[RMDB]
RNA sequence: GGGAACGACUCGAGUAGAGUCGAAAACGACUUACCUUCGGGUAAGUCGACAUAGGUGAGUUCAUCGGAUAGCUGCCUAGGUGAGUUCAUGGGAUAGCUGCCACAUGUAACGGUUCGCCGUUACAAAUUCAGAUAUCUGUUUCGACAGAUAUCUGAAAAAAGAAACAACAACAACAAC
Reactivity to DMS in 0.01 (KOAc 150mM, MgCl2 10mM, bicine 150mM(pH8.5), 24C), signal-to-noise 4, nucleotides 027 to 126: c010g010a030c000u000u000a000c000c010u000u000c200g030g020g020u000a000a010g010u000c000g010a030c140a080u000a040g010g010u000g000a080g010u000u010c040a060u000c080g020g000a100u010a060g020c030u000g000c020c010u000a100g010g000u000g000a090g010u010u000c030a050u010g010g000g000a080u000a060g010c060u000g000c030c040a120c260a130u000g000u010a000a000c010g000g010u000u020c210g020c000c000g010u000u000a010c010a030a060a110
Reactivity to 2A3 in 0.01 (KOAc 150mM, MgCl2 10mM, bicine 150mM(pH8.5), 24C), signal-to-noise 3, nucleotides 027 to 126: c010g020a000c000u000u010a000c000c000u020u070c260g040g000g010u010a000a010g000u000c000g010a000c010a070u140a030g130g010u070g090a070g020u050u070c030a040u070c090g000g050a090u080a080g020c040u050g020c050c040u040a060g000g050u050g060a100g040u060u060c030a050u120g000g060g020a070u070a060g030c030u050g030c030c000a090c010a070u060g000u020a010a000c000g000g050u020u030c260g010c060c000g000u000u000a000c000a000a060a020